[RMDB]
RNA sequence: GGGAACGACUCGAGUAGAGUCGAAAAUCGUCUAUACCCCUCGCAUCACCCCCUUUCUCGAAGCUGCCCGGCGGGCGGGAUGCCGGAUCAUCACGGGCGACAGGAUGCUCGAGGCACAGGCCGAGGAGCUCUAACGCUGUUUCGACAGCGUUAGAGCAAAAGAAACAACAACAACAAC
Reactivity to DMS in 0.01 (KOAc 150mM, MgCl2 10mM, bicine 150mM(pH8.5), 24C), signal-to-noise 2, nucleotides 027 to 126: u010c080g010u010c030u000a120u010a170c060c040c010c010u000c100g010c010a030u010c030a300c030c020c010c000c030u010u000u000c050u000c050g010a110a100g000c050u000g030c040c030c020g000g000c050g020g010g010c050g010g010g000a100u010g010c020c040g000g010a090u010c070a070u010c060a160c080g010g000g030c030g000a050c090a100g010g000a070u000g010c070u000c010g000a120g010g000c080a050c130a060g000g000c040c020g010a090g000g010a140